[RMDB]
RNA sequence: GGGAACGACUCGAGUAGAGUCGAAAACGACUACGUGAGGAAGGACAGGUUCAGACUUCGCGUGUCCUUUUUGUUUGUGUCUGAAUCGUAAAAACUCGGUGCCAAAACAAAGGGUGGUCCGAUGUGGCGAUAAGAAAACUUUCGAGUUUUUUUAUCGAAAAGAAACAACAACAACAAC
Reactivity to DMS in 0.01 (KOAc 150mM, MgCl2 10mM, bicine 150mM(pH8.5), 24C), signal-to-noise 6, nucleotides 027 to 126: c170g000a060c040u020a030c020g020u010g000a040g000g000a070a120g000g000a060c090a090g000g010u000u000c030a030g000a150c010u010u010c040g010c020g000u000g010u010c000c040u000u010u020u010u010g000u020u020u010g020u010g000u010c060u000g000a000a000u000c030g010u020a040a050a060a070a060c060u010c000g010g000u030g000c050c030a040a050a060a080c180a080a070a150g000g010g020u000g000g000u000c000c010g000a040u020g030u000g000g010
Reactivity to 2A3 in 0.01 (KOAc 150mM, MgCl2 10mM, bicine 150mM(pH8.5), 24C), signal-to-noise 4, nucleotides 027 to 126: c020g030a020c010u090a010c050g070u040g020a050g030g030a070a030g040g010a020c010a070g030g000u020u020c010a010g000a020c010u060u050c060g010c020g060u010g030u070c000c000u080u130u050u080u080g180u040u060u120g110u020g010u000c000u000g000a010a010u010c000g020u080a030a020a010a040a030c010u030c010g000g030u060g020c030c000a030a070a050a070c070a060a150a060g090g020g010u040g030g020u000c000c000g000a030u100g020u020g050g000
Conditions: 150 mM KOAc, 10 mM MgCl2 and 150 mM bicine (pH 8.5), 24 C. This 177-nucleotide RNA was probed chemically with DMS and 2A3. For DMS the reverse transcriptase was MarathonRT. For 2A3, 3,768 sequencing reads were counted. Source: RMDB library OK1LIB, as collected in RNAgym.